[RMDB]
RNA sequence: GGGAACGACUCGAGUAGAGUCGAAAAAUAGUGUUAUUCGUAACACUAUAUAUCCGAAGUCAAGGAUUCGUUCCAGAGACAUGCAUGCUAGCAUGAAAGCAACUGAACAAGCGUUCGCGCUUGUUAAUAAUCUAACAUCAUUCGUGAUGUUAGAUUAAAAAGAAACAACAACAACAAC
Reactivity to 2A3 in 0.01 (KOAc 150mM, MgCl2 10mM, bicine 150mM(pH8.5), 24C), signal-to-noise 9, nucleotides 027 to 126: a000u010a000g000u010g010u010u010a030u040u070c200g030u040a010a000c000a000c000u000a000u000a000u000a000u000c020c010g050a140a020g160u110c070a060a070g060g010a020u040u040c040g030u050u000c010c010a030g020a000g010a180c010a000u020g000c000a010u150g130c040u110a050g000c010a040u040g070a090a030a010g060c040a040a090c070u150g040a010a000c020a000a000g000c000g010u040u100c230g000c010g010c090u000u000g000u000u000a010a010
Reactivity to DMS in 0.01 (KOAc 150mM, MgCl2 10mM, bicine 150mM(pH8.5), 24C), signal-to-noise 9, nucleotides 027 to 126: a010u000a000g010u000g010u000u000a020u000u010c170g020u000a010a010c000a010c000u000a010u000a050u010a080u000c050c010g010a100a100g010u010c090a110a190g000g010a030u000u000c040g010u000u000c000c000a110g010a210g010a150c030a020u000g000c010a090u000g020c200u000a100g000c010a020u000g010a090a100a100g010c140a050a090c150u010g010a030a010c010a010a000g010c000g020u000u010c240g020c010g010c000u000u000g000u000u000a030a100